[RMDB]
RNA sequence: GGGAACGACUCGAGUAGAGUCGAAAACAUCUUUCCUCCCUACACAGUGACUCCAGCUUGGGAGGGGCAGGGCUAGGCUGAGCCAGCACUCCCUAUGGUGUCUGCCUGCCACGUGCAGCUCUGGAGUAAAACCUGGAGAAGUUCGCUUCUCCAGGAAGUAUGCAAGUCACUUCGGUGACUUGCAUACAAAAGAAACAACAACAACAAC
Reactivity to 2A3 in 0.01 (KOAc 150mM, MgCl2 10mM, bicine 150mM(pH8.5), 24C), signal-to-noise 1, nucleotides 027 to 156: c070a150u070c060u100u180u070c000c010u090c020c000c000u120a110c150a010c010a170g120u050g080a010c000u000c030c010a000g010c040u030u040g020g000g000a000g010g000g000g070c020a060g000g030g000c030u280a010g020g020c030u050g060a000g000c000c000a000g020c060a070c020u050c020c000c000u020a070u020g000g020u060g120u010c000u010g020c010c000u000g010c000c040a120c040g160u120g030c000a050g040c030u030c030u150g020g010a000g000u030a000a000a010a020c000c000u000g010g030a000g000a000a020g070u120u070c200g000c130u000u000c010u000c000c000a000g020g010a000a000